RNA sequence: GGGAACGACUCGAGUAGAGUCGAAAAUGGGUUCCAGGGAAAGCAAAUCCUUGGCAGUACCAUGUUGGAAGAUGAAUUCACACCUGAGGAUGUUAAUAUGCAGAUUAUGGGUGUGGUUAUGCAGAGUGAGGCCAUUUCUUCGGAAAUGGCAAAAGAAACAACAACAACAAC
Reactivity to 2A3 in 0.01 (KOAc 150mM, MgCl2 10mM, bicine 150mM(pH8.5), 24C), signal-to-noise 4, nucleotides 027 to 129: u070g000g000g000u110u000c000c000a000g010g000g000a110a000a000g120c100a020a050a060u000c000c030u000u000g000g000c030a010g020u020a180c010c020a000u130g090u060u070g060g000a070a070g030a120u180g080a010a110u210u170c000a020c040a060c000c000u010g000a000g240g030a050u070g010u000u060a210a030u150a120u300g040c000a020g010a060u000u060a020u300g010g020g000u000g000u000g000g010u050u030a030u000g080c070a050g000a000g140u120g040a060g120
Reactivity to DMS in 0.01 (KOAc 150mM, MgCl2 10mM, bicine 150mM(pH8.5), 24C), signal-to-noise 3, nucleotides 027 to 129: u000g020g010g020u030u020c000c000a000g000g000g000a040a100a180g000c300a050a070a040u000c000c020u040u000g000g000c300a110g030u000a130c030c000a060u030g040u000u000g000g000a080a080g020a090u000g000a070a080u010u020c030a040c030a020c010c010u030g000a090g040g020a120u040g010u000u000a090a080u020a000u000g010c040a100g070a140u000u000a090u060g070g020g000u000g040u000g010g020u000u000a040u000g020c070a080g010a200g030u020g010a080g010
An RNA of 170 nucleotides, treated with 2A3 and DMS and read out base by base. The reactions ran in a buffer of 150 mM KOAc, 10 mM MgCl2 and 150 mM bicine (pH 8.5), at 24 C. For 2A3, 2,977 sequencing reads were counted. The DMS profile rests on 17,612 reads. For DMS the reverse transcriptase was MarathonRT.